[RMDB]
RNA sequence: GGGAACGACUCGAGUAGAGUCGAAAAUCUGGUCAGAACAAAUGACGGUGGUCGUAAAGCCGUCCGGGAAUAUAUCGUCAUUAACGAUGAGCUUCGCGACAAUCUUUCCGGAAUGCCGCAUGCAGAGCAUAGGAGGCUGGUUCGCCAGCCUCCUAUGAAAAGAAACAACAACAACAAC
Reactivity to DMS in 0.01 (KOAc 150mM, MgCl2 10mM, bicine 150mM(pH8.5), 24C), signal-to-noise 3, nucleotides 027 to 126: u010c020u000g000g000u000c050a050g000a090a090c140a100a070a100u010g020a040c040g010g040u000g000g010u010c110g010u000a080a080a130g010c070c030g030u000c020c060g010g000g030a090a050u000a130u000a070u000c050g000u000c070a060u030u010a080a070c150g010a050u010g010a120g010c120u000u000c070g000c010g020a060c080a060a050u000c030u000u000u010c050c030g020g000a070a050u020g020c010c040g000c090a100u000g030c120a070g000a120g010
Reactivity to 2A3 in 0.01 (KOAc 150mM, MgCl2 10mM, bicine 150mM(pH8.5), 24C), signal-to-noise 1, nucleotides 027 to 126: u000c020u030g050g070u030c030a020g010a100a090c070a020a120a070u060g010a020c000g070g000u040g090g030u180c090g100u170a010a030a060g030c000c000g050u000c020c020g050g010g050a050a010u040a000u000a030u070c030g050u050c060a100u140u200a050a030c080g020a000u040g060a030g040c040u040u060c070g060c030g100a020c000a000a100u030c040u030u050u000c010c010g000g050a080a030u060g050c000c040g130c030a030u090g040c020a010g030a010g130
The record gives the reactivity of an RNA of 177 nucleotides to DMS and 2A3. For 2A3, 1,151 sequencing reads were counted. Reactivities are rounded to 0.1 and cut off at 0 and 3. DMS adducts were read by reverse transcription with MarathonRT. 2A3 is a SHAPE reagent: it acylates the 2'-hydroxyl of flexible nucleotides of all four kinds. It was measured as part of the RMDB library OK2TST. For 2A3 the reverse transcriptase was SuperScript II with manganese.